[RMDB]
Chemical mapping of a 177-nucleotide RNA with 2A3 and DMS.
For DMS, 5,441 sequencing reads were counted.
For 2A3 the reverse transcriptase was SuperScript II with manganese.
For DMS the reverse transcriptase was MarathonRT.
The 2A3 profile rests on 4,503 reads.
The RNA was probed in 150 mM KOAc, 10 mM MgCl2 and 150 mM bicine (pH 8.5) at 24 C.
RNA sequence: GGGAACGACUCGAGUAGAGUCGAAAAUAGCACUCAAAACAAUUUUUCACUUGGGUUAGAGUGUAUAAUUAUGGAGGAGUGCGGCAUGCCGCAGUGGAUGAUCCGGCUUUAUCACCUCGUUCGCUCCACACGUCCUUUAAUUCGUUAAAGGACGUGUAAAAGAAACAACAACAACAAC
Reactivity to 2A3 in 0.01 (KOAc 150mM, MgCl2 10mM, bicine 150mM(pH8.5), 24C), signal-to-noise 4, nucleotides 027 to 126: u070a010g000c010a010c010u010c010a030a030a050a040c020a040a040u030u050u050u180u150c050a040c040u040u050g190g090g130u300u220a080g020a010g020u020g010u020a020u030a040a020u050u090a060u080g070g040a110g100g030a020g030u030g010c000g010g040c040a050u190g060c000c010g000c110a050g090u140g140g020a020u040g010a020u040c020c010g000g000c020u040u030u020a140u060c070a100c050c000u000c010g010u030u020c040g020c060u000c030c000
Reactivity to DMS in 0.01 (KOAc 150mM, MgCl2 10mM, bicine 150mM(pH8.5), 24C), signal-to-noise 4, nucleotides 027 to 126: u010a110g000c020a010c010u000c010a040a210a170a060c030a020a020u000u000u010u000u000c070a040c080u010u000g020g030g020u010u010a140g000a030g020u000g010u010a040u000a020a030u000u010a060u010g000g010a300g000g000a040g020u010g010c030g020g020c090a060u000g010c020c040g020c130a080g010u010g000g010a050u000g000a110u000c100c020g010g000c020u000u000u000a060u010c080a090c200c030u000c010g020u000u000c020g010c020u000c060c070